About this RNA:
Source: RMDB library M2RFPK, as collected in RNAgym. Structure probing data (DMS and 2A3) for a 207-nucleotide construct. DMS adducts were read by reverse transcription with MarathonRT. DMS (dimethyl sulfate) methylates the pairing face of unpaired adenines and cytosines. 2A3 is a SHAPE reagent: it acylates the 2'-hydroxyl of flexible nucleotides of all four kinds. 2A3 adducts were read by reverse transcription with SuperScript II with manganese.
[RMDB]
RNA sequence: GGGAACGACUCGAGUAGAGUCGAAAAAUACACCAGCAGUAGGACUCAGCGACCGUCACAACAAGGCUGUGCUGGUAUCCGACGGUCGUAUAGCCCUGUCUUGCAGGUUGCCUUGCACUGACGUGCCACACCAUUUACAGAUUCGUCUGUAAAUGAACGGUAUAAAAGUCUUCGGACUUUUAUACCGAAAAGAAACAACAACAACAAC
Reactivity to DMS in 0.01 (KOAc 150mM, MgCl2 10mM, bicine 150mM(pH8.5), 24C), signal-to-noise 1, nucleotides 027 to 156: a130u000a040c030a120c000c010a090g010c040a090g040u010a040g000g000a060c010u020c110a130g020c000g000a030c030c000g050u010c050a160c090a130a050c060a040a070g000g020c030u000g040u000g060c040u000g000g000u000a030u010c040c030g010a010c000g060g000u010c030g030u000a050u000a050g010c000c000c010u010g010u000c070u000u000g030c030a140g010g010u000u010g000c000c150u000u010g040c010a050c060u040g010a210c160g020u010g000c020c030a080c050a150c130c000a030u000u000u000a030c030a030g000a130u000u010c300g000u000c000u010g010u000a020a010a000u000g000a020a160
Reactivity to 2A3 in 0.01 (KOAc 150mM, MgCl2 10mM, bicine 150mM(pH8.5), 24C), signal-to-noise 4, nucleotides 027 to 156: a000u120a020c060a020c000c000a000g000c000a000g000u080a020g010g040a040c000u040c110a020g010c000g000a000c010c000g010u020c010a030c030a160a130c060a160a120g060g020c090u160g090u150g110c010u030g020g040u030a070u090c040c060g000a000c000g000g000u010c000g020u070a090u100a030g000c000c000c010u030g060u080c040u060u160g000c010a030g010g040u040u100g040c010c010u030u090g010c000a030c060u150g090a100c120g030u020g040c060c030a090c010a020c050c000a010u000u000u000a000c000a010g010a020u040u090c150g080u010c090u000g000u010a010a010a000u000g000a040a030
Source information:
Conditions: 150 mM KOAc, 10 mM MgCl2 and 150 mM bicine (pH 8.5), 24 C. The 2A3 profile rests on 2,713 reads. Reactivities are rounded to 0.1 and cut off at 0 and 3.